[RMDB]
RNA sequence: GGGAACGACUCGAGUAGAGUCGAAAAACCUGUCGUCGUCGACGAAGGCAUGUGAGCCAACUCGAUGAAGAGCGUCAGCGGACGGCCUCCGAGACGAGCGAUGGACAGUAGAGCUUCUGCUCCUACCGAAGUAUUCACGGUUCGCCGUGAAUACUUCAAAAGAAACAACAACAACAAC
Reactivity to DMS in 0.01 (KOAc 150mM, MgCl2 10mM, bicine 150mM(pH8.5), 24C), signal-to-noise 1, nucleotides 027 to 126: a000c120c000u010g000u000c010g020u000c000g030u000c030g000a210c110g020a080a020g020g030c000a000u010g040u000g010a250g000c030c020a130a250c020u000c020g000a160u000g010a150a200g000a020g000c060g030u040c190a170g010c020g000g000a090c090g010g000c050c000u010c000c010g030a220g000a090c010g000a060g000c000g010a020u000g000g030a150c090a080g030u000a040g010a050g000c020u000u010c260u010g050c050u010c060c080u000a030c050c120
Reactivity to 2A3 in 0.01 (KOAc 150mM, MgCl2 10mM, bicine 150mM(pH8.5), 24C), signal-to-noise 2, nucleotides 027 to 126: a010c010c030u030g020u030c000g000u000c000g010u000c020g030a210c010g020a070a010g030g000c040a090u170g110u110g180a050g000c030c010a040a040c030u020c000g190a220u250g250a080a140g050a040g010c060g040u070c070a030g050c030g070g060a020c020g040g000c000c000u020c010c010g020a000g000a030c000g010a040g040c020g020a020u040g090g010a030c060a040g040u070a000g010a030g030c040u220u020c090u190g000c000u000c030c010u020a010c000c070